[RMDB]
RNA sequence: GGGAACGACUCGAGUAGAGUCGAAAACUUACACUUGUGUUUCCGGAAGUGAAGAUGAUACUUUUAUUAUACACAUGUUUAGGUUUCAUGUGUACUUGCUAUUUUGGUGUCUUCUCUCUUUUGAACCCUAUCCCUUAGUUCGCUAAGGGAAAAAGAAACAACAACAACAAC
Reactivity to DMS in 0.01 (KOAc 150mM, MgCl2 10mM, bicine 150mM(pH8.5), 24C), signal-to-noise 5, nucleotides 027 to 129: c070u040u060a100c110a110c130u030u050g030u000g030u000u000u000c020c050g000g000a020a010g000u060g050a070a010g000a070u000g000a020u040a000c000u020u030u010u010a030u030u020a160u030a010c020a000c020a000u000g020u040u040u050a100g000g020u000u030u010c000a000u030g010u030g010u000a000c200u030u040g030c180u040a000u020u010u000u000g030g020u000g020u020c000u010u010c010u000c020u010c030u020u000u020u000g000a070a080c000c010c010u000a170
Reactivity to 2A3 in 0.01 (KOAc 150mM, MgCl2 10mM, bicine 150mM(pH8.5), 24C), signal-to-noise 9, nucleotides 027 to 129: c020u090u130a040c090a050c090u070u090g040u000g000u070u020u000c020c000g010g020a000a000g010u010g100a130a010g010a030u040g000a000u020a020c010u020u080u060u050a100u120u070a030u020a010c000a000c010a010u010g090u040u070u160a230g120g080u080u100u050c000a000u010g010u010g010u020a030c030u060u130g100c030u040a070u110u100u050u100g020g000u010g000u000c000u020u000c010u000c010u000c000u000u000u000u010g050a070a060c000c000c010u020a040